The record gives the reactivity of an RNA of 177 nucleotides to 2A3 and DMS.
RNA sequence: GGGAACGACUCGAGUAGAGUCGAAAACAGAUGCCGUUCGCGGCAUCUGAAAGUGACGGUGAAAAUUGGCCAAGGUGCCAGCUACCACCGACACAGGGCGCAAAAGAGGAUUCUUCGGAAUCCUCAACUACCUAUUACUCUUCGGAGUAAUAGGUAGAAAAGAAACAACAACAACAAC
Reactivity to 2A3 in 0.01 (KOAc 150mM, MgCl2 10mM, bicine 150mM(pH8.5), 24C), signal-to-noise 5, nucleotides 027 to 126: c000a000g010a010u010g000c000c000g030u050u090c270g020c020g110g000c000a000u010c000u000g000a040a020a010g010u010g000a010c000g020g000u000g020a050a020a050a070u020u010g010g000c020c090a300a230g270g060u270g060c000c000a000g000c000u030a040c030c030a000c000c010g010a000c010a000c010a000g080g080g020c140g020c120a050a080a060a050g010a000g000g000a000u010u010c010u030u080c180g050g000a010a000u000c000c000u000c000a000a000
Reactivity to DMS in 0.01 (KOAc 150mM, MgCl2 10mM, bicine 150mM(pH8.5), 24C), signal-to-noise 6, nucleotides 027 to 126: c010a010g010a010u000g000c000c000g020u000u010c220g040c030g010g000c000a000u010c000u000g000a020a060a090g020u000g010a130c010g020g000u000g000a060a070a120a150u000u000g010g020c000c000a210a130g020g010u010g010c000c010a010g000c100u000a210c180c010a020c010c010g020a070c010a010c000a150g000g000g010c100g020c180a060a050a110a070g010a010g010g000a010u000u000c000u000u010c180g010g000a020a000u000c000c000u000c000a010a060

About this RNA:
The data come from the RNA Mapping Database (RMDB), library M2PK50. For 2A3 the reverse transcriptase was SuperScript II with manganese. Values are in units of 0.01, from 0 to 300, in steps of 10.